About this RNA:
An RNA of 207 nucleotides, treated with 2A3 and read out base by base. The data come from the RNA Mapping Database (RMDB), library OK3TST. The RNA was probed in 150 mM KOAc, 10 mM MgCl2 and 150 mM bicine (pH 8.5) at 24 C. For 2A3 the reverse transcriptase was SuperScript II with manganese.

[RMDB]
RNA sequence: GGGAACGACUCGAGUAGAGUCGAAAAGGAUCAGAGCCUGGAAUCCUCUCCAGAUUUAGGGUUCGUGCUGGUACUAACAGGUCAAAGAGGGCAGCAUGUUGGAACCAAGUGGGCUGUUGGAAGUCUAGAAGCAUGCUGAUCCCAGCAGAUGGAGAAACGAGGGAUUACCUUUCGAGGUAAUCCCUCGAAAAGAAACAACAACAACAAC
Reactivity to 2A3 in 0.01 (KOAc 150mM, MgCl2 10mM, bicine 150mM(pH8.5), 24C), signal-to-noise 1, nucleotides 027 to 156: g030g000a010u070c030a010g000a000g100c010c010u040g040g060a010a040u020c010c010u050c050u020c020c000a000g000a060u130u150u160a040g050g000g000u040u000c030g000u040g010c010u030g030g050u010a090c000u010a180a000c000a090g090g050u070c050a000a000a160g040a070g000g000g000c010a000g000c000a010u000g030u020u100g020g010a000a070c100c020a100a110g060u090g030g050g000c050u030g090u110u090g030g070a070a000g020u010c020u030a050g020a130a000g030c010a000u010g000c000u050g000a070u050c020c030c010a000g040c000a000g070a120u120g000g000a020g000a070a010a010